Chemical mapping of a 170-nucleotide RNA with DMS and 2A3. For 2A3, 18,261 sequencing reads were counted. High DMS reactivity at an A or C suggests that its Watson-Crick edge is free.
RNA sequence: GGGAACGACUCGAGUAGAGUCGAAAACCCUAUUGGUUGGGAAAAGUCCCGGAACCAGGAAAUGGGAAAGAGACGGUAGAAAAGAGCGAGCCUCCCAGUUUUCGAGUAGUCCCGGACCUAUCUAAAUACGCUAUCUCCUUCGGGAGAUAGAAAAGAAACAACAACAACAAC
Reactivity to DMS in 0.01 (KOAc 150mM, MgCl2 10mM, bicine 150mM(pH8.5), 24C), signal-to-noise 6, nucleotides 027 to 129: c000c000c000u050a080u030u030g030g050u000u030g030g000g020a030a050a130a100g030u000c020c000c100g000g000a110a070c080c050a110g000g040a060a060a080u000g000g000g050a020a060a060g000a080g020a070c090g030g040u030a030g050a100a070a070a090g030a040g050c130g020a110g020c000c000u030c030c020c020a030g010u000u000u000u000c060g020a090g040u050a100g010u000c030c010c100g030g020a110c090c040u040a120u000c070u010a030a060a080u000a100c260g000
Reactivity to 2A3 in 0.01 (KOAc 150mM, MgCl2 10mM, bicine 150mM(pH8.5), 24C), signal-to-noise 8, nucleotides 027 to 129: c020c000c000u040a120u060u230g030g020u020u030g010g000g000a050a110a000a010g070u020c000c010c000g010g010a020a020c020c010a020g040g020a020a040a030u070g020g010g020a020a080a050g080a050g020a010c030g040g060u130a060g120a100a150a090a010g060a010g050c040g000a000g010c000c000u010c010c000c000a070g040u060u040u020u030c050g000a060g020u050a010g020u020c000c010c000g010g020a010c000c000u020a060u050c040u060a030a120a060u210a050c080g000